[RMDB]
Overview: The record gives the reactivity of an RNA of 177 nucleotides to DMS. Reactivities are given for positions 27 through 126. DMS adducts were read by reverse transcription with MarathonRT. Conditions: 150 mM KOAc, 10 mM MgCl2 and 150 mM bicine (pH 8.5), 24 C. For DMS, 1,971 sequencing reads were counted. The data come from the RNA Mapping Database (RMDB), library TTRINS.
RNA sequence: GGGAACGACUCGAGUAGAGUCGAAAAGAUAUGGAUCAACAGCCCGACUUGGUAGAGCGAUAAGAUGGGAUCGGAAACGAUCCACAUCUUUUGACGCUCAAACAAGUCGGGCUGUUGAUCCUAAGUCCACCUUAAAAAAGUUCGCUUUUUUAAGGUGAAAAGAAACAACAACAACAAC
Reactivity to DMS in 0.01 (KOAc 150mM, MgCl2 10mM, bicine 150mM(pH8.5), 24C), signal-to-noise 2, nucleotides 027 to 126: g000a090u020a300u010g020g000a000u010c000a010a000c010a000g040c010c000c000g000a000c000u050u000g020g010u010a160g000a020g020c010g040a150u010a010a010g010a000u000g000g020g010a010u000c000g000g020a130a120a200c020g000a010u000c000c000a100c000a010u000c000u000u000u000u000g020a210c080g010c000u000c010a020a150a300c000a000a020g030u000c000g000g000g000c000u020g000u000u000g000a000u000c000c000u000a010a100g010u010c030